[RMDB]
RNA sequence: GGGAACGACUCGAGUAGAGUCGAAAAUCGGUCUGGACAGCCAGGAAUCGAGCGCGCUGUUCGAACUGCUGCAACGGCGAAUCACCUCGCCAGAGAACACCAUCCGCUGGAAUUGGGAAUCAGGUGAUAUGGUAGCGGGAUUCGUCCCGCUACCAUAAAAAGAAACAACAACAACAAC
Reactivity to DMS in 0.01 (KOAc 150mM, MgCl2 10mM, bicine 150mM(pH8.5), 24C), signal-to-noise 2, nucleotides 027 to 126: u070c000g040g020u040c000u000g000g000a170c010a020g000c020c080a170g000g000a100a130u010c080g010a030g000c120g020c130g000c000u000g000u000u000c000g000a160a010c060u000g000c090u000g040c120a080a260c170g080g000c020g050a110a030u060c030a010c030c080u000c000g010c000c020a080g000a170g010a080a130c060a300c000c000a030u020c000c000g000c160u000g030g000a040a100u070u010g010g030g000a140a030u020c050a050g010g000u090g000a000
Reactivity to 2A3 in 0.01 (KOAc 150mM, MgCl2 10mM, bicine 150mM(pH8.5), 24C), signal-to-noise 1, nucleotides 027 to 126: u120c000g040g000u010c040u060g060g000a000c000a000g020c030c000a040g060g100a040a220u220c180g000a000g070c000g000c030g020c110u090g020u030u000c030g000a120a080c000u090g060c000u000g000c020a250a020c150g000g000c000g000a000a020u050c020a050c040c000u000c000g000c000c000a000g050a000g000a110a000c030a000c030c000a000u040c000c000g270c270u230g020g010a090a100u090u250g100g000g060a040a100u110c030a000g000g030u000g040a050